[RMDB]
RNA sequence: GGGAACGACUCGAGUAGAGUCGAAAAUGAGCCGUGGGCCGCCCAGCCGGACCGCGGUGCCGUUGGCCAGCACAACCUGCAUGCCCAGUACGUAGUCGCCUGUGACGCCGUACUUCACGCAGCACAGGACGGAUUAAAGAUUCGUCUUUAAUCCGUCAAAAGAAACAACAACAACAAC
Reactivity to DMS in 0.01 (KOAc 150mM, MgCl2 10mM, bicine 150mM(pH8.5), 24C), signal-to-noise 8, nucleotides 027 to 126: u010g010a300g000c000c010g040u000g000g010g000c010c000g030c030c110c200a140g010c170c020g010g000a020c020c010g010c020g010g010u000g010c060c040g010u000u000g010g020c030c020a260g010c030a060c050a060a080c060c010u000g000c040a080u010g010c070c060c150a060g000u000a010c040g010u000a070g010u000c020g010c200c090u000g010u000g010a070c020g000c070c020g000u000a030c040u000u000c090a060c100g000c030a050g020c090a070c170a090g010
Reactivity to 2A3 in 0.01 (KOAc 150mM, MgCl2 10mM, bicine 150mM(pH8.5), 24C), signal-to-noise 4, nucleotides 027 to 126: u070g010a000g020c020c010g000u030g000g010g010c000c020g020c020c150c050a020g140c160c010g000g020a030c030c000g000c000g010g010u020g040c010c010g060u070u110g030g040c040c030a020g030c060a030c010a040a040c000c020u020g000c010a060u060g000c020c040c010a010g010u030a010c010g010u020a040g030u010c030g070c130c190u220g140u240g050a030c020g010c020c000g010u010a020c000u030u110c040a040c060g030c000a020g010c030a030c020a090g090